[RMDB]
RNA sequence: GGGAACGACUCGAGUAGAGUCGAAAAAAUCCAAUUCUAUUUCGUGAAGAUGUGAUAUCACAGUGCUCAGACAUAAAGAACUGGGAUUUAGCGAAAUUGACUUUCUCAGAAAUUUUCAGGCUUAAAGACAGUGACGGUAAUUCGUUACCGUCACUGUAAAAGAAACAACAACAACAAC
Reactivity to DMS in 0.01 (KOAc 150mM, MgCl2 10mM, bicine 150mM(pH8.5), 24C), signal-to-noise 1, nucleotides 027 to 126: a090a050u000c030c040a090a000u020u010c040u000a060u010u000u000c020g010u010g000a200a100g000a170u010g030u010g020a240u050a090u000c020a030c030a020g010u000g020c040u010c020a060g000a110c150a150u000a070a080a060g020a090a030c000u000g000g000g000a080u000u020u000a190g030c020g010a000a020a040u000u000g000a110c190u010u010u000c040u010c030a140g030a010a060a100u000u000u000u000c110a140g000g010c110u030u010a020a040a090g010
Reactivity to 2A3 in 0.01 (KOAc 150mM, MgCl2 10mM, bicine 150mM(pH8.5), 24C), signal-to-noise 1, nucleotides 027 to 126: a000a000u010c000c000a000a010u080u030c000u020a020u030u030u010c020g000u050g020a010a030g040a100u070g040u000g090a160u170a100u300c010a000c010a090g120u090g070c020u020c020a040g050a160c040a060u300a100a200a070g110a150a020c010u000g000g070g000a070u020u020u080a010g000c010g010a010a000a000u040u000g010a000c030u040u050u010c000u060c030a140g260a160a250a170u130u050u180u130c020a090g140g020c000u180u140a140a000a000g030